[RMDB]
RNA sequence: GGGAACGACUCGAGUAGAGUCGAAAAAGCGUCGCAUGAACCCGAUGGCGGUGUAGUCCAGGUCUGCCAGACCCGUCGCGCCGAAGUUGGCCAGCGUGCUGCGGACCGCAACGGUGCCGGGCGACUGGCGCUUUACUGACUUCGGUCAGUAAAGCGCAAAAGAAACAACAACAACAAC
Reactivity to 2A3 in 0.01 (KOAc 150mM, MgCl2 10mM, bicine 150mM(pH8.5), 24C), signal-to-noise 1, nucleotides 027 to 126: a000g090c020g090u050c010g000c000a000u100g130a160a070c050c040c010g110a150u120g010g080c020g000g030u070g000u030a060g020u020c010c080a040g000g040u000c040u070g010c020c020a070g050a300c000c000c000g100u150c050g010c000g030c020c000g000a100a040g040u280u300g040g000c000c010a060g070c030g150u270g070c040u210g000c030g070g000a060c020c030g040c000a010a020c030g050g000u030g000c020c000g010g000g010c010g010a060c010u010g060
Reactivity to DMS in 0.01 (KOAc 150mM, MgCl2 10mM, bicine 150mM(pH8.5), 24C), signal-to-noise 2, nucleotides 027 to 126: a080g010c120g020u010c020g010c030a160u010g020a070a120c100c070c000g010a040u010g000g010c030g000g000u000g020u000a120g010u010c120c050a140g000g000u010c030u010g020c070c020a040g020a140c040c010c020g000u000c110g000c030g060c020c050g020a040a200g000u000u000g050g040c000c000a020g000c030g020u030g020c120u000g010c000g020g020a080c000c010g020c100a070a190c020g010g010u000g020c020c000g000g000g030c020g010a040c050u000g010